[RMDB]
The record gives the reactivity of an RNA of 177 nucleotides to 2A3 and DMS.
RNA sequence: GGGAACGACUCGAGUAGAGUCGAAAAGAUAUGGAGCUCACGCAGCCGACGAAGUAUGGAACUACUCGGAAACGAGCCAUACAGAGGCUGAAGAGCUCCUAAGUCAAAACUUGGCUUCGGCCAAGAAGCCAGUUAAGGUGUUCGCACCUUAACUGGCAAAAGAAACAACAACAACAAC
Reactivity to 2A3 in 0.01 (KOAc 150mM, MgCl2 10mM, bicine 150mM(pH8.5), 24C), signal-to-noise 1, nucleotides 027 to 126: g020a020u000a010u030g020g000a000g000c010u040c000a050c270g220c030a010g000c050c000g170a300c070g000a160a020g000u020a000u000g000g050a110a070c150u260a090c000u300c010g000g000a010a030a020c000g000a020g000c050c010a000u020a000c000a000g040a070g010g000c010u010g000a050a030g000a000g000c000u000c010c000u000a000a000g030u040c030a000a020a190a280c000u000u020g000g010c000u070u090c280g060g000c020c000a010a000g020a000a020
Reactivity to DMS in 0.01 (KOAc 150mM, MgCl2 10mM, bicine 150mM(pH8.5), 24C), signal-to-noise 1, nucleotides 027 to 126: g000a020u000a300u000g000g020a000g010c020u000c000a080c190g000c050a010g000c010c000g000a190c170g020a090a100g000u000a000u000g000g000a160a030c150u010a300c030u000c000g010g010a060a120a190c020g140a020g000c000c000a030u000a020c000a060g050a050g060g090c000u010g000a090a010g000a020g000c000u000c000c000u000a000a040g000u000c000a080a050a130a170c000u000u030g000g000c000u000u000c270g050g000c080c000a030a000g000a150a130

The reactions ran in a buffer of 150 mM KOAc, 10 mM MgCl2 and 150 mM bicine (pH 8.5), at 24 C. As a SHAPE reagent, 2A3 marks flexible, mostly unpaired nucleotides at the ribose 2'-OH. The data come from the RNA Mapping Database (RMDB), library TTRDEL. For 2A3, 1,545 sequencing reads were counted. For DMS, 626 sequencing reads were counted.